[RMDB]
About this RNA: This 207-nucleotide RNA was probed chemically with 2A3 and DMS. Values cover nucleotides 27 to 156. The reactions ran in a buffer of 150 mM KOAc, 10 mM MgCl2 and 150 mM bicine (pH 8.5), at 24 C.
RNA sequence: GGGAACGACUCGAGUAGAGUCGAAAAGCAAAAUAUGUGAAACAUUUCUUCAGUGCUGCACAGAGUUCACUAGAUCAGGCAUUAAAGUGAUGAGAAUUAGGCAUACAGACAUGAACAUAGCUAUUAAGGUACCUUCAAAUAAAAAAGAAAACAUGAAUCAUUGUUCAUUCUUCGGAAUGAACAAUGAAAAAGAAACAACAACAACAAC
Reactivity to 2A3 in 0.01 (KOAc 150mM, MgCl2 10mM, bicine 150mM(pH8.5), 24C), signal-to-noise 3, nucleotides 027 to 156: g010c010a030a050a080a090u150a120u030g040u100g120a120a100a040c040a040u110u120u040c000u050u040c030a030g030u030g040c040u000g000c050a040c010a020g100a040g050u020u020c020a020c060u030a020g020a090u040c020a030g030g000c030a020u040u090a110a040a020g020u040g040a050u030g030a030g050a070a090u080u040a040g040g000c010a010u050a040c060a030g070a020c020a020u030g010a050a010c010a060u050a010g020c010u080a040u180u070a100a020g040g000u030a050c010c000u040u140c120a070a090a040u200a060a110a010a010a010a020g060a000a060a000a000c020a030u110g070a040a000
Reactivity to DMS in 0.01 (KOAc 150mM, MgCl2 10mM, bicine 150mM(pH8.5), 24C), signal-to-noise 2, nucleotides 027 to 156: g020c020a010a090a080a180u000a040u000g000u000g020a130a040a130c020a100u000u000u010c030u000u020c090a070g030u000g000c020u010g000c020a060c050a060g030a120g030u000u000c010a190c090u000a050g010a050u010c060a140g020g020c040a130u000u020a030a050a060g020u010g000a060u040g000a080g010a040a150u000u000a030g000g020c040a120u010a130c040a090g000a060c080a050u000g010a080a060c040a080u000a050g010c010u010a080u010u010a060a020g030g030u000a090c070c050u000u010c060a090a040a120u050a040a040a080a070a020a070g000a120a040a060a060c050a030u000g000a100a130

For DMS, 2,565 sequencing reads were counted. For 2A3, 1,741 sequencing reads were counted.